This 207-nucleotide RNA was probed chemically with 2A3 and DMS. Reactivities are given for positions 27 through 156. It was measured as part of the RMDB library M2RFOK. DMS adducts were read by reverse transcription with MarathonRT.
[RMDB]
RNA sequence: GGGAACGACUCGAGUAGAGUCGAAAAUACUUAGUACGCGCGUGGUUGCAGGCAUUCCGGGUGCAGCAACUGACGCGGAAGACUUUUCCCAGAGUGUGCGCUUCAACUGGCGUGCUGAGUAGUGCACGAAUUGCACGUACGUUCGCGUACGUGCAAAUUCUCUUACGCAGUUCGCUGCGUAAGAGAAAAAAGAAACAACAACAACAAC
Reactivity to 2A3 in 0.01 (KOAc 150mM, MgCl2 10mM, bicine 150mM(pH8.5), 24C), signal-to-noise 3, nucleotides 027 to 156: u080a000c000u010u010a000g000u010a020c020g000c000g000c000g000u000g050g000u000u010g000c060a120g060g020c010a060u090u080c120c140g220g030g010u020g020c020a000g000c000a010a000c010u150g200a010c010g000c030g000g000a020a000g180a050c060u220u140u030u000c010c000c000a000g010a010g000u100g000u010g030c010g000c000u010u040c080a290a300c110u010g020g000c000g000u010g000c010u010g000a020g000u070a000g020u030g000c010a010c010g040a040a100u050u030g010c000a000c010g000u000a000c000g020u010u050c170g000c000g090u000a000c000g010u010g000c000a000a000a000
Reactivity to DMS in 0.01 (KOAc 150mM, MgCl2 10mM, bicine 150mM(pH8.5), 24C), signal-to-noise 2, nucleotides 027 to 156: u010a060c040u000u000a050g020u000a090c050g030c020g010c040g090u010g000g000u000u000g030c020a150g010g020c000a020u000u000c030c300g020g030g130u010g010c000a300g000c030a030a020c030u000g010a040c000g020c010g020g030a070a140g020a170c140u000u000u000u000c010c010c020a240g000a100g030u010g010u000g020c020g010c000u000u010c050a050a120c070u010g020g020c040g010u010g020c030u000g000a070g000u000a040g040u000g040c040a020c040g030a090a140u010u000g000c000a000c000g000u000a000c000g050u020u000c300g020c070g030u010a030c030g010u000g000c000a000a000a040